[RMDB]
Source information: Conditions: 150 mM KOAc, 10 mM MgCl2 and 150 mM bicine (pH 8.5), 24 C. An RNA of 177 nucleotides, treated with DMS and 2A3 and read out base by base. It was measured as part of the RMDB library OK2TRN. For DMS, 3,949 sequencing reads were counted.
RNA sequence: GGGAACGACUCGAGUAGAGUCGAAAACGUCACAUGGAUCAUCUAGAGCGACAUGCGUACGAUCGAUCAUACUCAGCUACUAGGCGAUGGAUCCCAUGGAUAGUACGAUCUAGUACGUACCUCACGCAUCCAGUAGUACCUUCGGGUACUACUGGAUAAAAGAAACAACAACAACAAC
Reactivity to DMS in 0.01 (KOAc 150mM, MgCl2 10mM, bicine 150mM(pH8.5), 24C), signal-to-noise 5, nucleotides 027 to 126: c070g000u000c050a070c040a030u010g000g000a100u010c060a090u000c070u010a050g000a100g020c040g030a130c120a100u000g020c070g010u000a020c030g010a130u010c110g010a050u000c100a110u010a050c050u010c080a100g020c070u000a090c060u000a040g010g000c090g000a070u000g010g000a050u010c050c000c040a080u020g010g010a070u000a060g010u000a070c030g020a080u010c060u020a120g000u000a060c010g000u000a050c080c060u000c070a090c220g010c190
Reactivity to 2A3 in 0.01 (KOAc 150mM, MgCl2 10mM, bicine 150mM(pH8.5), 24C), signal-to-noise 5, nucleotides 027 to 126: c030g070u020c010a020c020a190u040g040g030a060u020c010a020u010c050u090a050g000a010g120c050g110a100c040a110u110g030c020g030u090a040c040g020a070u110c040g020a030u020c010a010u050a040c030u040c070a010g030c010u070a090c020u040a120g100g000c050g100a060u120g100g050a060u040c020c000c000a030u080g030g000a060u040a100g030u070a050c050g030a080u020c040u080a030g000u040a030c010g000u020a040c000c020u070c010a060c050g040c030